[RMDB]
RNA sequence: GGGAACGACUCGAGUAGAGUCGAAAAAUCGCGCCUGGUCGGACCAUAACGACGGCGGGCCGGUGGGGAAUCAGGGGGCUACCGUGGGAUAGCGAUGAGACAGCCCCUCCGAUGGCACCAAGCGUCGCACACUGGCCAUACUUCGGUAUGGCCAGAAUUACUACUUUACUUUCGAGUAAAGUAGUAAAAAAGAAACAACAACAACAAC
Reactivity to 2A3 in 0.01 (KOAc 150mM, MgCl2 10mM, bicine 150mM(pH8.5), 24C), signal-to-noise 2, nucleotides 027 to 156: a010u050c040g000c040g030c000c000u070g050g000u060c040g010g060a130c030c000a160u100a160a000c050g030a000c000g020g020c000g030g010g000c080c020g040g010u070g040g010g000g040a070a090u150c070a210g040g000g000g040g010c030u040a050c020c040g050u020g130g080g010a090u100a090g060c030g020a040u060g000a050g000a050c060a020g000c000c030c020c000u010c000c020g040a050u050g020g000c010a020c100c010a070a050g080c050g030u040c060g020c010a050c010a020c040u000g000g040c000c000a000u010a010c000u020u020c090g030g000u000a000u020g000g000c010c000a000g000a000a000
Reactivity to DMS in 0.01 (KOAc 150mM, MgCl2 10mM, bicine 150mM(pH8.5), 24C), signal-to-noise 1, nucleotides 027 to 156: a060u000c050g020c060g050c000c000u010g050g000u000c040g030g020a190c050c070a180u000a100a070c010g030a020c060g050g010c050g000g010g040c020c010g020g000u000g000g020g010g000a170a080u000c080a090g030g010g000g030g000c000u010a010c040c020g010u030g020g020g000a120u000a090g010c020g040a100u000g010a180g020a090c040a120g000c020c000c000c010u010c040c040g030a090u020g000g000c040a050c020c020a060a100g020c060g040u000c020g030c050a070c110a130c010u010g020g000c020c000a020u000a000c010u020u020c230g040g030u010a000u000g010g010c000c000a000g010a000a050

The record gives the reactivity of an RNA of 207 nucleotides to 2A3 and DMS. For 2A3 the reverse transcriptase was SuperScript II with manganese. The DMS profile rests on 2,670 reads. Values cover nucleotides 27 to 156. DMS adducts were read by reverse transcription with MarathonRT.